[RMDB]
RNA sequence: GGGAACGACUCGAGUAGAGUCGAAAAUGGUAAAUGUCUCGCCUGUGCUAUAUUUUGUUUUUCGGUUAGUUAAAUAUCGUACGUUCAUAUUUGAACGUUCUGCCGGAAUGCAUUAUCAAUAGAGGUACAUUCCCGUUUAGUUCGCUAAACGGGAAUGAAAAGAAACAACAACAACAAC
Reactivity to 2A3 in 0.01 (KOAc 150mM, MgCl2 10mM, bicine 150mM(pH8.5), 24C), signal-to-noise 3, nucleotides 027 to 126: u090g020g020u030a010a130a090u120g060u030c010u010c050g020c020c020u120g030u090g080c010u040a030u020a040u210u020u030u010g010u020u000u010u000u000c000g020g000u060u200a010g040u060u130a120a130a070u230a140u170c130g010u050a020c010g020u020u000c020a040u110a230u300u170u120g000a000a000c000g000u020u000c010u010g020c010c000g020g000a010a000u000g000c000a010u010u030a040u090c040a040a040u010a050g050a010g030g050u010a020
Reactivity to DMS in 0.01 (KOAc 150mM, MgCl2 10mM, bicine 150mM(pH8.5), 24C), signal-to-noise 2, nucleotides 027 to 126: u020g000g010u000a050a110a080u010g010u000c050u000c030g010c020c020u010g010u000g020c040u000a070u010a100u000u000u000u010g010u000u000u000u000u000c000g010g010u000u010a050g010u010u000a080a070a110u000a100u010c200g020u000a020c010g020u000u000c000a070u000a240u000u010u010g010a000a000c000g010u000u000c030u010g000c000c000g000g000a000a020u000g010c010a010u000u000a020u000c180a070a060u000a030g000a060g010g010u000a170